Structure probing data (DMS and 2A3) for a 177-nucleotide construct.
RNA sequence: GGGAACGACUCGAGUAGAGUCGAAAACAGUGUAGGCCGGGAGUUGAGACUGGUGUGUGUUUAGUGGAUUAUCUGAUCAGCACAUGUGUGACAGUGUUGAUCACAAGUCAUUGCCAGCUCUGUUCAUAGAAUUAGAGUAGUUCGCUACUCUAAUUCUAAAAGAAACAACAACAACAAC
Reactivity to DMS in 0.01 (KOAc 150mM, MgCl2 10mM, bicine 150mM(pH8.5), 24C), signal-to-noise 6, nucleotides 027 to 126: c080a070g010u000g010u000a060g000g000c040c050g010g010g010a090g000u000u000g000a050g010a110c040u000g010g010u010g010u000g020u010g000u010u000u000a070g020u010g010g000a070u000u010a110u010c130u000g000a010u000c000a010g010c000a000c010a070u010g030u000g010u010g010a070c080a050g010u000g010u000u000g000a020u000c000a010c090a040a070g020u000c030a050u000u010g010c020c010a040g010c040u000c030u010g000u010u000c090a160u000
Reactivity to 2A3 in 0.01 (KOAc 150mM, MgCl2 10mM, bicine 150mM(pH8.5), 24C), signal-to-noise 4, nucleotides 027 to 126: c030a020g050u020g040u160a030g070g030c030c020g050g040g020a060g030u120u140g040a010g010a090c010u030g010g010u030g030u010g010u000g010u030u080u130a130g020u050g130g040a080u080u040a090u170c050u040g000a010u010c020a010g000c010a040c100a200u040g050u020g080u140g170a050c030a060g020u000g010u010u000g000a010u010c000a000c010a010a010g010u020c000a040u020u170g030c000c000a010g020c020u000c030u050g040u030u040c040a030u030

Source: RMDB library RFMREP, as collected in RNAgym. The RNA was probed in 150 mM KOAc, 10 mM MgCl2 and 150 mM bicine (pH 8.5) at 24 C. High DMS reactivity at an A or C suggests that its Watson-Crick edge is free.